[RMDB]
RNA sequence: GGGAACGACUCGAGUAGAGUCGAAAAGUGCCCGAAGCCACCGGUCUAUACGGCGGGGACACGUACUAGACCCGAAGCCGCCUUGCGACGAAUGACUCGGUGGUAUCGGCGAGGGUGGACACUGGCGAGGGGUUCAACUGCAGCAACACCCCGAAGCCAUCAAGUGUAACUUCGGUUACACUUGAUGAAAAGAAACAACAACAACAAC
Reactivity to DMS in 0.01 (KOAc 150mM, MgCl2 10mM, bicine 150mM(pH8.5), 24C), signal-to-noise 2, nucleotides 027 to 156: g040u000g000c000c000c010g000a130a300g020c000c010a000c000c000g020g020u000c040u000a100u000a070c030g000g010c010g030g020g030g040a090c040a230c070g030u000a100c070u000a130g010a200c010c020c020g010a120a290g050c050c000g000c040c080u010u010g050c040g000a040c030g000a120a140u000g000a070c000u000c000g110g060u000g000g010u000a020u000c040g000g010c040g020a130g030g060g010u000g010g000a100c010a030c060u000g000g020c010g000a080g000g030g030g000u000u010c010a070a110c060u010g000c070a070g030c030a030a090c030a030c020c000c010c010g000a100a170g020c130
Reactivity to 2A3 in 0.01 (KOAc 150mM, MgCl2 10mM, bicine 150mM(pH8.5), 24C), signal-to-noise 3, nucleotides 027 to 156: g090u060g060c030c000c000g020a070a030g000c020c000a000c010c020g000g030u020c010u030a140u030a090c050g000g000c010g000g000g010g030a060c050a010c120g090u140a060c070u100a050g110a110c000c020c040g030a050a010g050c010c010g000c010c000u050u190g070c070g050a110c030g090a180a100u160g020a020c020u030c170g010g010u030g010g000u010a060u010c010g060g020c040g000a060g020g000g030u110g000g010a030c030a020c100u090g070g010c030g010a040g000g010g000g010u000u010c050a090a020c050u130g030c040a040g010c000a060a060c010a040c050c010c000c010g020a040a000g050c010